[RMDB]
RNA sequence: GGGAACGACUCGAGUAGAGUCGAAAAACUCGAUGAAGCGCCUGCAGGAGGACACCAUGUGCAAGAUGGCCGUUCUGGGACGCGGAUCGAUGCGAGACCGGCGGAAGGAGGAGGAGCUGCGGGGCAGCAGCUAUCAAAAUUUCGAUUUUGAUAGCUGAAAAGAAACAACAACAACAAC
Reactivity to DMS in 0.01 (KOAc 150mM, MgCl2 10mM, bicine 150mM(pH8.5), 24C), signal-to-noise 9, nucleotides 027 to 126: a090c040u000c020g010a070u030g010a220a210g020c050g010c030c010u000g020c050a060g010g000a100g000g000a070c090a150c030c020a040u010g010u020g010c240a100a110g000a050u010g000g010c070c030g000u010u010c010u010g000g000g000a100c030g000c020g000g010a080u010c060g010a070u020g010c050g000a100g000a150c050c040g000g000c050g000g010a120a080g000g000a100g010g010a120g000g000a120g010c030u000g000c060g010g000g000g010c080a110g010
Reactivity to 2A3 in 0.01 (KOAc 150mM, MgCl2 10mM, bicine 150mM(pH8.5), 24C), signal-to-noise 9, nucleotides 027 to 126: a000c030u030c030g060a090u110g070a090a050g010c030g040c030c020u120g120c030a030g020g090a030g040g010a030c020a040c070c020a040u090g090u150g150c060a070a060g060a150u050g030g010c040c040g030u070u050c030u060g020g010g020a030c020g000c010g020g020a020u060c050g050a050u140g040c030g010a050g060a060c010c020g030g010c050g050g040a100a050g040g040a030g020g020a030g010g010a030g010c010u020g000c030g020g020g000g000c000a010g010
An RNA of 177 nucleotides, treated with DMS and 2A3 and read out base by base. The RNA was probed in 150 mM KOAc, 10 mM MgCl2 and 150 mM bicine (pH 8.5) at 24 C. The 2A3 profile rests on 13,529 reads. 2A3 adducts were read by reverse transcription with SuperScript II with manganese. It was measured as part of the RMDB library OK1LIB. DMS adducts were read by reverse transcription with MarathonRT.